This 207-nucleotide RNA was probed chemically with 2A3.
For 2A3, 1,346 sequencing reads were counted.

RNA sequence: GGGAACGACUCGAGUAGAGUCGAAAAGGGGUCUUAGUUUCUGUAUACUACCCACCUUAUAGAACUACGUCUGAAGCCUCCACGGACGCUAUAAGAGGUAUACGAAGCUAAGACGGAGGCACCCAAACGCAACUACAGCUUCGGCUGUAGUUGCGAACCUUAUUCCUUCCUUCGGGAAGGAAUAAGGAAAAGAAACAACAACAACAAC
Reactivity to 2A3 in 0.01 (KOAc 150mM, MgCl2 10mM, bicine 150mM(pH8.5), 24C), signal-to-noise 1, nucleotides 027 to 156: g030g020g000g010u010c020u000u020a010g020u040u010u030c180u250g060u000a050u010a030c010u150a110c010c000c140a040c020c000u030u000a000u010a010g070a120a160c130u210a120c300g010u000c000u030g050a090a030g020c000c020u000c010c010a030c020g020g000a000c000g000c040u000a000u000a020a020g040a050g110g010u040a010u000a020c020g040a020a010g000c010u000a010a000g000a000c010g020g000a000g010g000c000a040c000c010c010a100a090a010c000g000c000a000a000c010u010a000c000a010g000c000u000u220c300g160g000c010u010g000u000a010g010u000u000g020c000g000a000a000

Values cover nucleotides 27 to 156.